[RMDB]
The data come from the RNA Mapping Database (RMDB), library OK2TRN. An RNA of 177 nucleotides, treated with DMS and 2A3 and read out base by base. The RNA was probed in 150 mM KOAc, 10 mM MgCl2 and 150 mM bicine (pH 8.5) at 24 C.

RNA sequence: GGGAACGACUCGAGUAGAGUCGAAAACGUCCAGGACAGACAGUUGAGCUGUAACUUGUCUGUUUGGAGCAUUGCAAGGAGCGGUCACACUGUCUACUUCAAGCCACGGAGGCACUUUUUUGCAGCCCAUUUGCUUCCUUUUCGAAGGAAGCAAAUGAAAAGAAACAACAACAACAAC
Reactivity to DMS in 0.01 (KOAc 150mM, MgCl2 10mM, bicine 150mM(pH8.5), 24C), signal-to-noise 5, nucleotides 027 to 126: c150g010u010c010c010a100g010g000a040c080a010g010a020c010a020g010u010u000g000a240g010c120u010g020u000a040a140c010u000u010g020u000c090u000g010u000u010u010g000g000a110g000c070a070u000u010g010c050a050a060g000g010a200g000c060g000g000u000c040a060c170a080c050u000g010u000c020u000a070c120u000u010c110a070a100g010c040c060a060c100g020g010a090g000g000c050a060c040u000u000u000u000u000u000g000c060a060g010c020c060
Reactivity to 2A3 in 0.01 (KOAc 150mM, MgCl2 10mM, bicine 150mM(pH8.5), 24C), signal-to-noise 4, nucleotides 027 to 126: c020g070u040c000c000a020g070g060a050c020a020g000a000c000a000g010u010u040g110a050g100c090u070g060u130a000a030c020u050u160g020u000c030u020g030u040u040u090g060g020a030g040c050a070u050u180g010c010a030a010g020g000a030g030c050g050g020u070c000a030c000a010c060u030g010u050c020u050a120c020u090u110c070a080a020g020c020c000a020c080g060g040a050g020g060c010a030c010u070u070u090u020u050u110g020c020a020g040c030c020